[RMDB]
Annotation: Source: RMDB library TTRDES, as collected in RNAgym. Structure probing data (2A3 and DMS) for a 177-nucleotide construct. For DMS, 4,823 sequencing reads were counted. DMS adducts were read by reverse transcription with MarathonRT. For 2A3 the reverse transcriptase was SuperScript II with manganese.
RNA sequence: GGGAACGACUCGAGUAGAGUCGAAAAGAUAUGGACCGUCACAUGGUCCGAAGAACAAGGUCGGAAACGACCUUGGGAGGACUUUGUGAGCGGUCCUAAGUCAAAGCGACGUCUUCGGACGUCGCAAGUAUAGAAAUUACUUCGGUAAUUUCUAUACAAAAGAAACAACAACAACAAC
Reactivity to 2A3 in 0.01 (KOAc 150mM, MgCl2 10mM, bicine 150mM(pH8.5), 24C), signal-to-noise 2, nucleotides 027 to 126: g050a000u080a060u140g010g010a000c010c010g020u050c000a010c000a010u030g000g000u000c000c000g070a180a000g000a020a000c010a000a000g000g000u000c000g010g030a110a070a100c010g010a000c000c000u000u000g010g000g000a020g000g000a000c000u050u010u030g020u030g040a110g150c010g000g000u000c000c000u000a010a000g010u020c050a080a050a050g000c010g010a000c010g010u000c000u040u140c300g170g010a020c000g000u000c000g000c000a000a000
Reactivity to DMS in 0.01 (KOAc 150mM, MgCl2 10mM, bicine 150mM(pH8.5), 24C), signal-to-noise 3, nucleotides 027 to 126: g000a070u010a300u010g000g010a010c010c000g010u000c010a000c030a040u000g000g000u000c000c000g000a060a100g030a190a160c010a010a010g010g020u000c020g010g010a140a120a300c000g010a010c000c000u000u000g010g000g000a100g010g010a020c000u000u000u000g000u000g010a110g020c010g000g000u000c000c000u000a000a090g000u000c040a100a130a120g000c020g000a000c000g000u000c010u000u020c270g020g000a010c000g010u000c000g020c000a000a030